RNA sequence: GGGAACGACUCGAGUAGAGUCGAAAAUAGGCGUAGCGUCCGGCGUGCAGGAUUUGCAGCAGGAUCUUUGCACCCGAAUCGUGGACCGCCCUGGUGAUUCGGCGGUGCCGUCGGGCUUGCGCCGAAGCCCACCAGAAACUUUCGAGUUUCUGGUGGGAAAAGAAACAACAACAACAAC
Reactivity to 2A3 in 0.01 (KOAc 150mM, MgCl2 10mM, bicine 150mM(pH8.5), 24C), signal-to-noise 4, nucleotides 027 to 126: u090a020g000g000c000g020u020a020g000c020g090u020c010c010g010g010c020g060u160g030c050a020g040g090a080u050u080u160g090c070a060g060c060a050g080g070a070u060c060u180u170u110g010c010a040c000c010c000g010a020a050u090c050g030u150g110g100a030c030c010g070c030c030c020u090g060g060u100g060a100u130u010c010g030g000c030g060g020u040g040c020c000g010u010c010g030g010g000c000u010u020g000c000g000c000c000g010a000a010g010
Reactivity to DMS in 0.01 (KOAc 150mM, MgCl2 10mM, bicine 150mM(pH8.5), 24C), signal-to-noise 4, nucleotides 027 to 126: u000a130g000g020c010g030u000a070g010c140g020u000c020c010g010g000c100g020u020g010c050a040g010g010a030u010u000u000g010c050a150g000c140a150g000g000a030u010c030u000u010u000g010c030a100c040c030c020g000a040a020u010c040g020u010g030g000a130c040c020g020c030c010c050u010g010g010u010g000a120u010u010c090g000g010c080g010g010u000g020c060c000g000u000c030g010g000g010c030u000u000g010c010g010c000c000g020a090a100g000
An RNA of 177 nucleotides, treated with 2A3 and DMS and read out base by base.
The 2A3 profile rests on 5,747 reads.